[RMDB]
An RNA of 207 nucleotides, treated with 2A3 and DMS and read out base by base. It was measured as part of the RMDB library M2RFPK. For 2A3 the reverse transcriptase was SuperScript II with manganese. As a SHAPE reagent, 2A3 marks flexible, mostly unpaired nucleotides at the ribose 2'-OH.
RNA sequence: GGGAACGACUCGAGUAGAGUCGAAAAGAGAGGGUAACCACCGGCGCGCGUCACUGAUAUAUCCACCGGGGGGUAAGGGGAGAAAAGGAUACAGCGCGACGAAGUUAGCACGCUGCCCCGCAAGGCUUGAAGAGUGUAGUGUUCGCACUACACUCAAGAAUAUACGCAGAUUCGUCUGCGUAUAUUCAAAAGAAACAACAACAACAAC
Reactivity to 2A3 in 0.01 (KOAc 150mM, MgCl2 10mM, bicine 150mM(pH8.5), 24C), signal-to-noise 4, nucleotides 027 to 156: g100a010g000a030g050g050g000u070a080a060c040c030a030c070c020g000g000c000g010c010g000c000g050u040c040a030c090u050g060a040u080a040u050a020u190c030c040a070c080c060g000g000g020g000g020g020u050a060a060g030g010g020g000a050g040a030a090a000a000g020g000a010u020a090c060a030g010c010g000c000g010a030c000g000a060a010g070u080u100a060g060c040a010c110g010c030u040g000c000c010c000c020g010c020a030a030g050g000c030u130u140g090a180a100g000a050g010u000g000u000a000g000u000g040u070u050c130g020c040a000c000u000a000c000a000c000u000c000a000a000
Reactivity to DMS in 0.01 (KOAc 150mM, MgCl2 10mM, bicine 150mM(pH8.5), 24C), signal-to-noise 2, nucleotides 027 to 156: g020a160g000a060g010g040g000u000a080a150c040c050a070c080c030g000g000c010g030c040g030c050g000u000c070a120c110u000g000a150u010a140u010a060u020c060c020a110c060c020g030g020g020g040g020g010u000a050a080g020g000g010g000a130g010a090a070a110a100g010g000a140u010a040c020a060g020c010g050c000g000a110c000g020a090a100g010u000u000a140g030c040a050c050g010c030u000g000c000c000c000c000g030c080a050a120g010g010c050u000u010g030a070a240g000a050g020u000g020u000a000g030u000g010u000u000c290g020c000a020c010u000a000c010a010c000u000c000a010a040

Record summary: The RNA was probed in 150 mM KOAc, 10 mM MgCl2 and 150 mM bicine (pH 8.5) at 24 C.